The record gives the reactivity of an RNA of 177 nucleotides to DMS and 2A3. Values cover nucleotides 27 to 126. Conditions: 150 mM KOAc, 10 mM MgCl2 and 150 mM bicine (pH 8.5), 24 C. For DMS the reverse transcriptase was MarathonRT. 2A3 adducts were read by reverse transcription with SuperScript II with manganese.

[RMDB]
RNA sequence: GGGAACGACUCGAGUAGAGUCGAAAAGGCGACAGCGGGUUCCGUCGACGAUGGCAAGUCCACGCUGAUUGGGCGGCUACUCUACGACUCCAAGGCUGUGAUGGAAGACCAGUGGGCGUCGGUGGAGCUUCAGCAACUUGUUCGCAAGUUGCUGAAGAAAAGAAACAACAACAACAAC
Reactivity to DMS in 0.01 (KOAc 150mM, MgCl2 10mM, bicine 150mM(pH8.5), 24C), signal-to-noise 1, nucleotides 027 to 126: g010g010c030g020a060c070a050g000c070g000g020g020u000u010c050c030g000u000c040g010a050c060g000a080u000g010g010c130a140a080g010u000c020c010a040c050g020c060u010g010a210u010u010g020g010g010c060g000g040c040u010a150c140u010c050u000a130c040g000a070c010u020c010c020a030a050g000g040c040u000g000u000g040a150u020g020g010a100a060g000a130c040c030a080g010u000g040g000g000c010g020u000c040g000g020u000g000g000a040g000
Reactivity to 2A3 in 0.01 (KOAc 150mM, MgCl2 10mM, bicine 150mM(pH8.5), 24C), signal-to-noise 1, nucleotides 027 to 126: g040g000c040g040a030c090a060g030c030g020g040g000u030u050c000c000g000u020c000g050a090c020g040a090u050g010g020c080a140a090g040u000c000c000a060c080g040c070u060g020a200u070u080g040g000g000c000g000g040c020u080a080c060u010c020u150a060c010g020a010c000u000c040c010a000a030g120g050c050u030g040u060g070a130u070g050g070a070a040g050a130c070c040a020g020u090g000g080g000c030g010u010c020g070g000u000g050g030a040g030